[RMDB]
The data come from the RNA Mapping Database (RMDB), library OK2TST. Chemical mapping of a 177-nucleotide RNA with 2A3 and DMS. For 2A3 the reverse transcriptase was SuperScript II with manganese. The reactions ran in a buffer of 150 mM KOAc, 10 mM MgCl2 and 150 mM bicine (pH 8.5), at 24 C. Reactivities are given for positions 27 through 126. For DMS, 1,534 sequencing reads were counted.
RNA sequence: GGGAACGACUCGAGUAGAGUCGAAAAAAAUCUUCAUUGACGACUGUAUCACCACUGAGACAGACCUUUACUGUAGCCGGCUAGUAACAUCUCCAUUGUCCUCGGCCAUGCAGAACUGCAUCGGGGGCACGUGUUCACCAUUCGUGGUGAACACGUGAAAAGAAACAACAACAACAAC
Reactivity to 2A3 in 0.01 (KOAc 150mM, MgCl2 10mM, bicine 150mM(pH8.5), 24C), signal-to-noise 1, nucleotides 027 to 126: a000a000a000u070c060u140u000c080a140u070u090g050a080c060g020a010c020u050g010u090a030u070c020a010c040c000a040c090u000g010a000g050a090c030a060g060a120c020c040u060u130u090a050c060u040g030u040a030g000c040c070g070g010c030u020a030g020u020a150a000c000a060u020c050u030c030c040a090u000u150g010u040c000c010u000c010g030g000c030c030a000u000g000c000a000g070a300a170c180u050g000c010a040u090c030g000g020g000g000g000
Reactivity to DMS in 0.01 (KOAc 150mM, MgCl2 10mM, bicine 150mM(pH8.5), 24C), signal-to-noise 2, nucleotides 027 to 126: a050a000a030u000c040u000u000c040a100u000u010g010a090c100g000a100c060u000g010u010a110u000c040a080c020c040a110c100u000g010a100g000a080c080a040g010a120c050c050u010u000u010a050c060u010g010u000a080g030c080c070g020g010c060u010a030g040u010a040a080c090a050u010c080u000c000c060a180u020u000g010u000c030c020u000c070g010g020c090c170a080u000g010c020a040g000a090a050c140u000g020c030a070u000c060g000g020g010g000g000